[RMDB]
RNA sequence: GGGAACGACUCGAGUAGAGUCGAAAAGAAGGACCAGAGUGAGGACAUAUGUGUGGGAGAAGAUUCUAGAAGCUCUUGAGAGAAUCCAGAUGAAAGUCAGCGAGGAGCUGUACUGCUGGAGCUGCAGCUUUCGGUAUUUGUUCGCAAAUACCGAAAGAAAAGAAACAACAACAACAAC
Reactivity to DMS in 0.01 (KOAc 150mM, MgCl2 10mM, bicine 150mM(pH8.5), 24C), signal-to-noise 5, nucleotides 027 to 126: g010a120a090g010g020a120c060c030a050g000a110g010u010g010a070g010g010a070c070a070u030a060u020g000u010g020u010g020g000g000a070g000a090a060g000a050u010u010c040u000a090g010a080a060g000c030u000c020u000u000g010a140g000a090g000a060a080u010c000c020a060g010a110u040g010a100a060a050g010u000c020a010g000c020g000a120g020g000a260g000c010u000g000u030a020c020u000g000c020u010g000g010a040g010c050u010g000c100a110g000
Reactivity to 2A3 in 0.01 (KOAc 150mM, MgCl2 10mM, bicine 150mM(pH8.5), 24C), signal-to-noise 5, nucleotides 027 to 126: g070a010a020g030g030a010c030c010a020g030a030g040u060g040a040g010g030a000c040a050u170a070u080g100u030g000u040g050g020g010a030g010a080a020g020a060u070u030c020u060a060g020a100a000g030c030u010c030u100u120g050a090g000a000g030a100a090u000c020c010a000g020a050u110g180a140a030a030g020u030c000a000g000c000g030a070g000g070a020g020c000u000g040u100a030c000u020g070c000u010g000g010a010g000c010u050g000c020a030g020